The record gives the reactivity of an RNA of 207 nucleotides to 2A3. Reactivities are given for positions 27 through 156.
[RMDB]
RNA sequence: GGGAACGACUCGAGUAGAGUCGAAAACUCGGGUUCGCCCGAGAGAGUCUCCUAAGUCCUCCAGGCCUCGGAUAGCCUCAUCGAUCAUUCGGAAACGAAUGGGAGAGGUGCGGAGAGUAUUGGGAGGAUAUGGAAAAGCGCUAACUUCGGUUAGCAACCCGAGACAGUAUUUCGAUACUGUCUCGGGAAAAGAAACAACAACAACAAC
Reactivity to 2A3 in 0.01 (KOAc 150mM, MgCl2 10mM, bicine 150mM(pH8.5), 24C), signal-to-noise 1, nucleotides 027 to 156: c000u000c000g010g000g040u150u080c220g130c060c030c080g010a000g000a000g000a020g150u010c020u000c070c000u040a120a060g000u000c010c000u010c050c000a030g030g010c000c020u020c040g000g080a020u100a090g000c010c000u010c050a190u270c000g080a070u050c010a000u020u000c000g080g000a060a070a060c020g000a000a000u000g010g010g000a000g000a000g010g020u040g010c070g030g010a050g020a000g020u040a220u120u300g120g070g000a040g010g000a010u020a040u090g040g000a040a010a070a040g160c180g010c110u100a010a000c010u090u140c240g040g000u000u000a000g000c020a000a030